[RMDB]
RNA sequence: GGGAACGACUCGAGUAGAGUCGAAAAGGACACUGGAGGAUUGGGCGGAGAUUUGUCAGGAGAGGUGGGAGCGGGAUUGGGCUCGAUUUCUGAUCGAUCCGGGGCAAGUGACCACUCUUCUGGAUUGGCAACCUAGCCAGUUCGCUGGCUAGGUUGCAAAAGAAACAACAACAACAAC
Reactivity to 2A3 in 0.01 (KOAc 150mM, MgCl2 10mM, bicine 150mM(pH8.5), 24C), signal-to-noise 1, nucleotides 027 to 126: g030g000a000c010a010c140u150g030g010a000g120g070a200u150u150g080g020g030c080g010g060a020g000a090u130u020u200g020u090c020a040g020g010a050g000a000g020g250u150g000g000g000a070g170c190g000g060g040a070u160u160g000g000g000c070u080c030g060a030u090u000u000c030u030g090a060u000c000g000a030u000c000c000g040g000g000g000c110a120a000g000u000g040a060c000c060a000c000u040c000u050u020c000u000g010g000a080u000u050g060
About this RNA:
This 177-nucleotide RNA was probed chemically with 2A3. The RNA was probed in 150 mM KOAc, 10 mM MgCl2 and 150 mM bicine (pH 8.5) at 24 C. 2A3 adducts were read by reverse transcription with SuperScript II with manganese.